[RMDB]
Source: RMDB library OK2TRN, as collected in RNAgym. This 177-nucleotide RNA was probed chemically with DMS and 2A3. For 2A3, 2,303 sequencing reads were counted. 2A3 is a SHAPE reagent: it acylates the 2'-hydroxyl of flexible nucleotides of all four kinds.
RNA sequence: GGGAACGACUCGAGUAGAGUCGAAAAAAAGGCUCCUCCAUCCAAGAGUGUACGUAACUUAGCAGCUUCGAAUGUCGACAUAUUCGCAGAUGUUGACUCUGUUCUUGAUACUUUUCAUUUUGAAAGAGGUAAAUAUCGAUUUCGAUCGAUAUUUACCAAAAGAAACAACAACAACAAC
Reactivity to DMS in 0.01 (KOAc 150mM, MgCl2 10mM, bicine 150mM(pH8.5), 24C), signal-to-noise 5, nucleotides 027 to 126: a050a050a070g010g000c030u000c020c010u000c020c030a080u020c050c050a080a090g010a070g010u000g000u000a040c140g020u010a080a060c090u000u000a080g010c010a040g000c090u000u010c080g010a060a050u010g010u000c100g020a070c100a040u000a060u000u010c150g020c160a100g010a040u000g010u000u000g000a060c020u000c050u010g000u000u000c040u000u000g010a120u020a120c120u000u000u000u010c030a180u010u000u010u010g000a040a030a070g010a190
Reactivity to 2A3 in 0.01 (KOAc 150mM, MgCl2 10mM, bicine 150mM(pH8.5), 24C), signal-to-noise 3, nucleotides 027 to 126: a010a000a010g070g020c040u010c030c000u000c020c010a030u000c020c020a050a020g060a000g060u090g050u030a040c080g050u030a030a080c030u050u060a010g040c020a010g010c010u080u070c070g070a150a070u120g020u060c000g030a010c010a030u100a050u110u130c110g000c080a030g040a100u000g000u030u010g020a010c010u010c040u060g060u070u020c020u050u040g050a080u070a220c020u090u060u020u050c050a160u160u210u140u290g120a080a070a030g100a040